[RMDB]
RNA sequence: GGGAACGACUCGAGUAGAGUCGAAAAAAGGCUAAAGGAUACUUAGAGCAACAGACAUGCUGGGGGUUGGUGAAGGCUCCUUAGUGAUAUGUGAGCAGGAUUUUUAAGGGUUGCAGUGAACCGCUGGCGUAUUUGGGUUUUUCGAAACCCAAAUACGAAAAGAAACAACAACAACAAC
Reactivity to DMS in 0.01 (KOAc 150mM, MgCl2 10mM, bicine 150mM(pH8.5), 24C), signal-to-noise 2, nucleotides 027 to 126: a080a070g030g010c040u010a050a040a070g010g010a060u000a060c050u000u000a110g010a090g020c080a040a080c120a090g010a090c080a050u000g010c080u010g030g010g000g000g030u000u010g010g020u000g000a060a090g020g030c030u010c040c030u000u000a020g000u010g020a120u000a030u020g010u020g000a070g010c020a090g000g000a010u000u010u000u010u000a090a090g000g000g000u000u000g030c030a070g020u000g010a130a060c080c060g020c100u010g010g030

Notes:
Structure probing data (DMS) for a 177-nucleotide construct. For DMS, 1,567 sequencing reads were counted. Reactivities are rounded to 0.1 and cut off at 0 and 3.